[RMDB]
RNA sequence: GGGAACGACUCGAGUAGAGUCGAAAAUAAAACCGCGAAGAGAACCAAGCCUUGAGACACAAGGAGGGAUGUCUCAAGGCUUGGUUCUCGACUAGUGUCGAGUCGUUCCCAAUCCGUCCGCAAAAAAACUGUUAUACAUGUUCGCAUGUAUAACAGUAAAAGAAACAACAACAACAAC
Reactivity to DMS in 0.01 (KOAc 150mM, MgCl2 10mM, bicine 150mM(pH8.5), 24C), signal-to-noise 3, nucleotides 027 to 126: u000a110a040a110a090c150c100g020c140g010a070a130g010a100g010a020a000c000c020a020a030g000c020c000u000u010g010a010g020a010c010a070c190a070a060g000g000a060g010g000g000a050u000g010u000c000u000c000a000a000g000g010c000u000u000g000g000u000u000c000u000c000g000a020c030u010a070g000u000g000u010c000g000a010g000u000c000g000u000u000c000c000c000a030a010u000c010c000g010u000c030c020g030c180a000a000a090a090a060a080
An RNA of 177 nucleotides, treated with DMS and read out base by base. Values cover nucleotides 27 to 126. The reactions ran in a buffer of 150 mM KOAc, 10 mM MgCl2 and 150 mM bicine (pH 8.5), at 24 C.